[RMDB]
RNA sequence: GGGAACGACUCGAGUAGAGUCGAAAAGAUAUGGACUGGAUUCUGGACAUGAAGCCACUCGGAAACGAGUGUGCUUCAACAGCCAGAUCCAGUCCUAAGUCAAACCAUUGUCCUUCGGGACAAUGGACACUAGUUGUCCGUUCGCGGACAACUAGUGAAAAGAAACAACAACAACAAC
Reactivity to 2A3 in 0.01 (KOAc 150mM, MgCl2 10mM, bicine 150mM(pH8.5), 24C), signal-to-noise 1, nucleotides 027 to 126: g010a000u050a010u130g000g000a000c010u010g040g020a060u300u060c010u000g070g000a130c130a300u280g000a010a000g010c000c000a010c000u000c020g060g000a060a070a040c000g000a000g010u020g010u040g000c010u010u000c000a000a000c020a010g100c000c000a040g000a000u000c000c000a000g020u040c000c000u000a000a000g010u000c000a000a060a040c000c000a000u000u000g000u000c020c020u050u080c300g140g000g000a000c040a000a010u000g000g000a020
Reactivity to DMS in 0.01 (KOAc 150mM, MgCl2 10mM, bicine 150mM(pH8.5), 24C), signal-to-noise 2, nucleotides 027 to 126: g000a000u000a300u000g000g000a030c000u000g010g000a030u000u020c000u000g030g010a060c150a300u010g020a010a000g010c000c010a000c000u000c000g000g020a100a080a120c000g010a020g010u000g020u030g010c000u000u000c010a000a030c250a230g000c030c000a000g000a030u000c000c010a000g020u000c000c000u000a000a010g010u010c020a180a130a200c020c000a010u010u000g000u000c010c000u000u000c280g030g000g000a020c000a000a000u000g000g000a130